[RMDB]
RNA sequence: GGGAACGACUCGAGUAGAGUCGAAAAAGUUGGCUCAGAUCCAACACUUGGCAGCGCGCCAAAGAAUGCCGUCACCACUUGGCAUAGGGCCAAAUAAAGCGUCACCACUUGGCAGAGGGCCAUGCACCGGCAUCAGGCGUUUCGACGCCUGAUGCCGAAAAGAAACAACAACAACAAC
Reactivity to 2A3 in 0.01 (KOAc 150mM, MgCl2 10mM, bicine 150mM(pH8.5), 24C), signal-to-noise 1, nucleotides 027 to 126: a000g000u010u020g000g000c010u070c300a000g000a170u040c000c000a000a000c000a020c010u010u000g040g000c000a110g040c110g000c000g040c080c150a100a110a040g130a000a000u050g050c030c000g090u150c000a030c140c040a110c020u000u070g000g010c000a050u090a000g110g010g000c000c000a000a110a000u220a000a170a000g070c000g030u040c070a060c030c010a010c050u130u060g050g000c000a010g050a010g110g000g090c000c000a010u000g040c040a000c110

An RNA of 177 nucleotides, treated with 2A3 and read out base by base. The reactions ran in a buffer of 150 mM KOAc, 10 mM MgCl2 and 150 mM bicine (pH 8.5), at 24 C.